[RMDB]
RNA sequence: GGGAACGACUCGAGUAGAGUCGAAAAGAUCUGGGUACCCAAGAAGGAAGGAAGAGAACGCUUGAGAAACAGAAGCCAACUCAGAGUGGUGCAGGAAGCUGUGGGGUUUGCUUUUGCUAACUGACAUACUCCCAUCUCCAUCCUUACCUGUCACCUCAUAACACGCAAGAUUCGUCUUGCGUGUUAUAAAAGAAACAACAACAACAAC
Reactivity to DMS in 0.01 (KOAc 150mM, MgCl2 10mM, bicine 150mM(pH8.5), 24C), signal-to-noise 3, nucleotides 027 to 156: g010a100u000c020u000g000g010g020u000a100c040c010c050a080a100g000a160a100g020g000a110a050g000g010a140a120g000a050g000a070a090c130g000c040u000u000g010a060g010a130a080a260c050a090g020a070a090g020c060c060a050a090c040u010c040a120g000a140g020u000g000g020u000g020c050a070g000g010a060a080g000c070u010g000u000g020g020g030g010u000u000u000g020c030u000u000u000u000g020c060u000a070a110c110u000g020a070c030a050u000a070c080u000c000c010c010a170u010c060u010c030c020a060u010c200c040u000u000a060c020c000u000g010u000c010a040c030c040u000c070
Reactivity to 2A3 in 0.01 (KOAc 150mM, MgCl2 10mM, bicine 150mM(pH8.5), 24C), signal-to-noise 5, nucleotides 027 to 156: g040a050u050c040u080g000g010g040u080a070c030c030c020a030a040g040a030a020g050g020a020a020g030g020a060a030g020a010g020a140a020c060g000c050u080u070g040a050g040a100a090a010c050a030g060a090a000g050c010c010a030a010c030u030c040a020g040a050g110u040g010g040u050g000c010a020g000g040a030a010g010c080u060g030u080g040g010g000g030u010u050u040g040c020u040u100u100u190g060c040u050a080a100c040u070g080a020c010a050u060a070c050u080c030c000c000a040u030c020u000c030c010a080u070c020c000u040u050a210c000c000u060g070u110c030a020c030c010u030c030